Notes:
The record gives the reactivity of an RNA of 177 nucleotides to DMS and 2A3. Source: RMDB library OK2TST, as collected in RNAgym. 2A3 adducts were read by reverse transcription with SuperScript II with manganese. For DMS, 37,637 sequencing reads were counted. Conditions: 150 mM KOAc, 10 mM MgCl2 and 150 mM bicine (pH 8.5), 24 C.
[RMDB]
RNA sequence: GGGAACGACUCGAGUAGAGUCGAAAAUGCCGGGUUCAUUCCUUCAGCCCGUGCGAUAUCCUCGCUUACCGUUGCUGCGAGGAGUGGUCGCCACAGCCAUGCCAGAACGGCCAGAAUGAGCGCGCCACAGUACUAUAGCAUUCGUGCUAUAGUACUGAAAAGAAACAACAACAACAAC
Reactivity to DMS in 0.01 (KOAc 150mM, MgCl2 10mM, bicine 150mM(pH8.5), 24C), signal-to-noise 9, nucleotides 027 to 126: u010g010c050c010g000g000g020u000u010c110a120u000u000c040c050u000u010c170a120g010c010c020c030g020u010g020c000g010a160u000a080u000c010c000u000c010g010c010u000u010a150c140c140g010u000u000g020c100u000g010c010g010a030g010g000a020g010u000g010g000u000c090g010c020c040a050c100a090g000c020c030a050u000g000c030c040a120g000a090a160c150g010g010c030c200a060g010a060a090u000g000a300g000c030g010c080g010c060c070a160
Reactivity to 2A3 in 0.01 (KOAc 150mM, MgCl2 10mM, bicine 150mM(pH8.5), 24C), signal-to-noise 9, nucleotides 027 to 126: u080g000c010c000g010g000g030u040u070c050a060u140u110c030c030u090u140c030a010g000c010c010c030g020u110g000c000g000a020u020a040u120c000c000u010c010g000c020u070u120a150c050c070g300u260u190g070c100u040g000c010g000a010g010g000a000g000u010g040g000u030c020g010c030c020a050c010a030g000c020c010a050u100g020c010c010a080g040a230a050c060g040g000c000c020a050g020a070a080u050g010a030g010c050g000c020g020c040c010a050